[RMDB]
Annotation
Conditions: 150 mM KOAc, 10 mM MgCl2 and 150 mM bicine (pH 8.5), 24 C. Chemical mapping of a 207-nucleotide RNA with 2A3. High 2A3 reactivity points to a flexible backbone, as in loops and unpaired stretches. Reactivities are given for positions 27 through 156. For 2A3 the reverse transcriptase was SuperScript II with manganese.
RNA sequence: GGGAACGACUCGAGUAGAGUCGAAAAUUAAUAACCUGCAUUUAGCCUUCGCUCCCCAGCUUCCGCUCGUAAGACGGGGAUCAAGCGGAGUCAAACCUAAACGAGAUCGUGUGGACGCUUCGGCUUGGAGAUCGAAACACUAAAUUGAAUCAAGCUACCCUAAAGAGGACUUCGGUCCUCUUUAGGGAAAAGAAACAACAACAACAAC
Reactivity to 2A3 in 0.01 (KOAc 150mM, MgCl2 10mM, bicine 150mM(pH8.5), 24C), signal-to-noise 1, nucleotides 027 to 156: u150u060a050a230u080a090a020c000c000u040g090c100a190u070u130u300a030g000c000c030u020u000c000g000c000u000c000c000c010c010a000g020c010u000u040c010c060g000c010u000c010g000u030a000a000g070a090c060g010g000g000g040a020u070c110a030a020g000c000g000g030a000g000u030c050a040a090a090c010c030u150a000a000a110c030g010a000g000a020u010c020g000u000g000u020g010g040a040c090g010c010u020u000c010g060g000c000u000u010g000g000a000g010a000u070c000g010a020a000a020c020a030c040u060a010a090a100u300u300g050a000a000u040c000a000a000g000c000u020a040